RNA sequence: GGGAACGACUCGAGUAGAGUCGAAAAAACAUUGCUGUUUUGUCAUCAGUUAGGUCACAACUUCUUGAGUUUGAGAACCUCUCAGUGGAUUCUUCAUUUAAUAGCAUGGGAGAGGCUGCAUUACGGGCCCAAGCCAAGUAUUCGUACUUGGCUUGGGAAAAGAAACAACAACAACAAC
Reactivity to DMS in 0.01 (KOAc 150mM, MgCl2 10mM, bicine 150mM(pH8.5), 24C), signal-to-noise 1, nucleotides 027 to 126: a030a050c050a050u000u000g010c100u000g010u000u000u000u000g000u010c090a040u000c050a040g000u020u010a050g010g010u000c050a060c060a050a060c080u000u000c040u010u040g010a060g010u010u000u000g000a140g020a060a100c040c020u000c050u000c050a200g000u000g020g000a080u000u000c090u000u010c120a110u000u050u000a020a070u020a110g030c050a040u000g020g020g010a070g000a060g000g010c060u000g020c040a090u000u000a090c190g040g010g040